The record gives the reactivity of an RNA of 177 nucleotides to DMS and 2A3.
2A3 adducts were read by reverse transcription with SuperScript II with manganese.
It was measured as part of the RMDB library OK1LIB.
For DMS, 93,628 sequencing reads were counted.
RNA sequence: GGGAACGACUCGAGUAGAGUCGAAAAGAAAGCGUGUGGCUGCGAUGCAGUCUUGUCGUAUGACCGGCCAAAUGCGACGCGCGCGAAAGUCCUUGAUGCUGAUAGGCCGGUUAUAGCAUCGGACGAAGGGCGGGCCCGUGUUCGCAUGGGUUUGCCCAAAAGAAACAACAACAACAAC
Reactivity to DMS in 0.01 (KOAc 150mM, MgCl2 10mM, bicine 150mM(pH8.5), 24C), signal-to-noise 9, nucleotides 027 to 126: g000a100a070a130g000c010g020u000g020u010g010g010c000u000g000c010g010a190u050g010c000a010g010u010c010u010u040g020u000c000g030u000a060u020g000a060c010c000g000g000c000c010a080a120a090u020g010c000g000a010c010g010c000g010c000g000c010g000a100a100a100g010u000c000c000u010u040g020a010u000g010c000u000g010a130u020a080g000g000c000c000g000g000u000u010a040u030a020g000c010a000u000c000g010g000a030c030g010a120a120
Reactivity to 2A3 in 0.01 (KOAc 150mM, MgCl2 10mM, bicine 150mM(pH8.5), 24C), signal-to-noise 9, nucleotides 027 to 126: g110a020a050a000g010c010g000u040g020u040g030g000c010u010g000c090g180a130u300g010c010a000g000u000c010u060u140g010u000c010g000u020a080u160g060a040c000c000g000g010c000c010a070a200a070u180g000c000g000a000c000g000c000g000c000g000c000g050a120a030a010g010u000c010c000u050u240g000a000u000g000c010u020g050a080u060a110g010g000c000c000g000g000u010u050a050u030a000g000c000a000u000c000g000g000a010c020g020a100a130